[RMDB]
RNA sequence: GGGAACGACUCGAGUAGAGUCGAAAAAGUUCGCGCUUCCGUGAAACGCGACAAUCGGACGGUGGCUGCAAGUCGCAUCGCAAAACCGCGGCAAGUGGAGUUAGCGAGAGGAGGCUGGGUUUUGGCUAGAACACACGGUACUUCGGUACCGUGUGAAUACGGAAUAACACUUCGGUGUUAUUCCGUAAAAAGAAACAACAACAACAAC
Reactivity to 2A3 in 0.01 (KOAc 150mM, MgCl2 10mM, bicine 150mM(pH8.5), 24C), signal-to-noise 2, nucleotides 027 to 156: a000g090u080u040c010g010c000g010c040u050u040c050c010g090u070g120a110a000a000c030g010c000g020a040c030a040a070u100c090g100g000a030c020g020g040u010g030g000c000u060g010c040a110a070g000u040c020g000c070a010u070c020g030c060a030a000a050a030c010c050g050c070g020g050c120a140a040g020u070g000g030a040g000u080u110a020g030c040g010a010g000a060g020g030a000g050g020c030u050g020g060g000u020u020u050u040g050g000c030u050a090g030a130a010c010a000c000a000c010g000g000u000a000c000u010u000c120g040g000u000a000c000c000g000u010g010u030g000a000a000
Reactivity to DMS in 0.01 (KOAc 150mM, MgCl2 10mM, bicine 150mM(pH8.5), 24C), signal-to-noise 1, nucleotides 027 to 156: a070g010u000u000c000g020c000g000c010u010u010c040c110g060u010g020a070a060a030c000g000c000g000a050c050a040a060u000c070g030g000a140c020g030g020u000g010g000c030u000g080c040a060a110g000u010c010g000c010a130u000c080g030c040a070a070a240a090c080c080g000c000g000g000c050a130a130g000u000g020g010a070g000u000u000a160g030c040g020a140g030a110g020g030a080g060g000c040u030g000g020g000u010u000u000u000g010g050c030u000a090g030a070a170c000a000c000a030c020g000g000u000a010c000u010u020c210g030g010u000a000c000c000g000u000g020u000g000a030a080